[RMDB]
RNA sequence: GGGAACGACUCGAGUAGAGUCGAAAAUUCAUGAGACCGAGUUGGAGGCGUACGUUAUUGACACCCACGGGUGCGAUGAAUUCUACACGCUGGACUUGCUCGUAAACCUGAACGUCUCUCUUGAUCUUGACGUUUAUGUAGACGUACUCGACGAGGACUGCCUGAUCAUAUUCGUAUGAUCAGGCAGAAAAGAAACAACAACAACAAC
Reactivity to DMS in 0.01 (KOAc 150mM, MgCl2 10mM, bicine 150mM(pH8.5), 24C), signal-to-noise 2, nucleotides 027 to 156: u000u000c060a070u000g010a080g020a090c080c020g000a110g050u010u000g030g000a120g030g010c090g030u000a100c300g020u000u000a090u000u020g010a130c010a020c030c020c030a110c260g070g000g000u000g020c000g000a090u000g000a070a050u010u000c020u000a020c060a040c050g000c020u010g020g010a040c030u000u010g010c000u000c040g030u000a020a080a120c060c120u000g000a040a020c010g030u000c000u000c070u000c050u000u010g000a080u000c020u000u000g010a030c030g020u000u000u000a060u020g000u000a110g000a090c020g010u010a110c000u010c000g010a080c040g050a250g040g010a160
Reactivity to 2A3 in 0.01 (KOAc 150mM, MgCl2 10mM, bicine 150mM(pH8.5), 24C), signal-to-noise 4, nucleotides 027 to 156: u070u020c010a040u160g030a010g030a070c090c040g000a030g000u080u070g090g020a010g030g000c010g000u030a070c070g020u100u040a050u070u120g040a110c000a000c010c020c020a070c170g110g000g000u000g000c010g020a010u040g060a020a050u170u040c020u050a020c060a010c050g020c050u030g010g030a100c020u100u130g020c030u030c020g030u040a020a040a180c000c030u020g040a010a000c040g020u000c000u020c000u000c010u070u080g070a120u050c010u030u070g030a020c010g050u000u020u030a120u200g070u060a020g000a040c010g000u050a170c020u000c020g000a000c020g010a010g030g100a020
Chemical mapping of a 207-nucleotide RNA with DMS and 2A3.
For DMS the reverse transcriptase was MarathonRT.
The reactions ran in a buffer of 150 mM KOAc, 10 mM MgCl2 and 150 mM bicine (pH 8.5), at 24 C.
For DMS, 4,338 sequencing reads were counted.
2A3 adducts were read by reverse transcription with SuperScript II with manganese.
Source: RMDB library OK3TST, as collected in RNAgym.